Structure probing data (DMS and 2A3) for a 177-nucleotide construct. For 2A3 the reverse transcriptase was SuperScript II with manganese. DMS (dimethyl sulfate) methylates the pairing face of unpaired adenines and cytosines. For DMS, 1,872 sequencing reads were counted. Conditions: 150 mM KOAc, 10 mM MgCl2 and 150 mM bicine (pH 8.5), 24 C.

[RMDB]
RNA sequence: GGGAACGACUCGAGUAGAGUCGAAAAUGCGGCCGAGCAUCACGUUGGCGUCGGUGACGCACAGCGGUCCGCCGCCGCGGUAGCAGGCCGGGCCGGGGUCGGCUCCGGCCGAGUCCGGGCCGACUCGGUCCACGAUAGAGUUCGCUCUAUCGUGGACAAAAGAAACAACAACAACAAC
Reactivity to DMS in 0.01 (KOAc 150mM, MgCl2 10mM, bicine 150mM(pH8.5), 24C), signal-to-noise 2, nucleotides 027 to 126: u020g020c020g010g010c030c020g000a140g030c010a150u010c100a100c010g020u010u000g050g010c000g020u000c000g010g020u000g030a070c040g000c000a120c190a120g020c000g000g010u000c040c030g000c040c020g020c010c000g000c000g010g000u000a190g010c040a250g010g010c010c010g010g000g030c000c010g000g000g010g010u000c010g010g000c000u020c030c010g000g010c000c170g000a040g000u010c010c000g000g000g010c000c010g010a020c000u000c000g000
Reactivity to 2A3 in 0.01 (KOAc 150mM, MgCl2 10mM, bicine 150mM(pH8.5), 24C), signal-to-noise 1, nucleotides 027 to 126: u140g010c030g020g020c000c010g050a140g020c010a100u080c010a040c090g030u130u300g010g010c020g020u000c020g010g210u140g170a180c030g040c030a220c080a220g040c000g010g050u010c000c010g000c000c010g020c020c000g000c000g000g000u030a040g000c020a000g000g000c010c030g010g000g050c060c020g000g000g000g050u010c000g000g050c080u070c070c060g030g010c010c040g020a000g010u020c000c000g000g020g000c000c000g000a000c010u000c010g010